[RMDB]
RNA sequence: GGGAACGACUCGAGUAGAGUCGAAAAGACAAUGUGAGAAAGUUGGCCAGGCUGAGAAAGUCCACUUGGACUCAGGCGGGGUCCAAGCCUUGGCCUCAGCUUCCUUCUCUGUCUGGGCGUGGCAGUGAUCAAACGAGUGUUUCGACACUCGUUUGAUAAAAGAAACAACAACAACAAC
Reactivity to DMS in 0.01 (KOAc 150mM, MgCl2 10mM, bicine 150mM(pH8.5), 24C), signal-to-noise 3, nucleotides 027 to 126: g020a050c030a030a090u010g020u010g000a050g010a050a050a060g020u000u000g010g010c070c130a060g010g000c020u000g000a050g010a100a070a080g000u000c070c140a170c080u000u010g000g000a010c020u000c090a100g010g010c210g050g010g000g010u000c020c030a050a020g000c150c050u000u000g020g030c080c020u020c040a020g000c020u000u000c040c040u000u010c010u010c020u000g010u000c020u000g000g000g010c110g030u000g010g020c060a080g020u000g000